[RMDB]
RNA sequence: GGGAACGACUCGAGUAGAGUCGAAAACACAGUCUUCGGACUGUGAAAAAACCUUUGUGGGUGCAUCAGGAACUACUAUCUAGACAGAUUAACCCAUUGGGUUAAUCCGAAUAGCCUGAGCACCCACUCUGGUAAAAAAGAGUAGUUCGCUACUCAACAUUGUAUUAAAGUUCGCUUUAAUACAAUGAAAAGAAACAACAACAACAAC
Reactivity to 2A3 in 0.01 (KOAc 150mM, MgCl2 10mM, bicine 150mM(pH8.5), 24C), signal-to-noise 3, nucleotides 027 to 156: c000a000c020a000g010u020c020u060u100c220g120g010a000c000u010g000u000g020a000a000a010a000a020a010c020c000u030u000u010g010u010g000g000g000u000g010c000a300u020c010a020g020g010a100a060c050u190a020c010u080a300u150c030u050a070g050a140c080a070g020a030u010u000a000a020c010c000c120a300u100u300g000g000g000u000u000a000a000u000c010c010g070a160a050u010a010g020c000c000u010g000a010g010c000a000c000c000c000a010c000u000c000u010g000g000u030a060a100a020a000a000a000g010a000g010u010a010g020u040u090c260g010c110u000a000c000u000c000a010a010
Reactivity to DMS in 0.01 (KOAc 150mM, MgCl2 10mM, bicine 150mM(pH8.5), 24C), signal-to-noise 1, nucleotides 027 to 156: c010a030c010a020g010u000c010u000u000c300g000g020a050c020u000g000u010g000a000a080a080a080a060a040c010c000u010u010u000g010u000g010g030g000u010g050c000a180u010c010a010g000g010a150a160c070u000a270c070u020a070u010c090u010a170g000a300c140a020g000a010u000u000a020a000c020c000c010a300u000u010g050g020g000u010u000a000a000u000c000c000g020a100a130u000a070g000c000c000u010g000a050g020c020a030c010c010c010a000c000u000c000u010g000g030u010a000a040a130a080a080a130g010a070g000u000a040g010u000u010c120g010c020u000a090c000u000c010a020a300
Overview
This 207-nucleotide RNA was probed chemically with 2A3 and DMS. Reactivities are given for positions 27 through 156. It was measured as part of the RMDB library RNAMAK. For DMS the reverse transcriptase was MarathonRT.